An RNA of 177 nucleotides, treated with 2A3 and DMS and read out base by base. Values cover nucleotides 27 to 126. The data come from the RNA Mapping Database (RMDB), library RFMREP. Conditions: 150 mM KOAc, 10 mM MgCl2 and 150 mM bicine (pH 8.5), 24 C.
[RMDB]
RNA sequence: GGGAACGACUCGAGUAGAGUCGAAAAUAUUAGGAAACUGGGGCACAACAAUAAUACGUGUUCCACAACUUUCAGCGCGGGUGUGUCUUCUUUUCCUGCUUGAGAUAGCGCUAUGUCACUGUUCCUCACUUCUACGUAUGUUCGCAUACGUAGAAGUAAAAGAAACAACAACAACAAC
Reactivity to 2A3 in 0.01 (KOAc 150mM, MgCl2 10mM, bicine 150mM(pH8.5), 24C), signal-to-noise 3, nucleotides 027 to 126: u060a000u060u100a030g000g040a060a010a000c040u050g000g010g010g010c020a020c000a030a080c040a090a170u190a200a030u100a100c130g020u010g000u040u000c000c010a020c010a010a040c020u070u140u080c070a040g030c010g000c020g080g020g020u030g010u000g010u000c010u030u020c000u040u080u030u050c010c000u010g030c010u030u090g040a110g020a130u090a040g040c040g000c080u030a080u140g080u030c020a010c130u050g020u030u020c000c010u040c010
Reactivity to DMS in 0.01 (KOAc 150mM, MgCl2 10mM, bicine 150mM(pH8.5), 24C), signal-to-noise 4, nucleotides 027 to 126: u000a080u010u000a090g000g000a030a070a090c180u000g000g000g010g000c010a010c010a140a130c180a160a120u020a080a110u010a080c170g010u000g000u000u000c010c010a020c160a080a110c060u000u000u010c080a050g000c070g030c040g000g000g010u000g010u000g010u000c030u000u010c040u010u000u010u000c020c010u000g000c050u000u000g000a040g020a080u000a070g000c030g020c040u000a070u000g010u000c060a070c110u010g010u010u000c010c000u000c190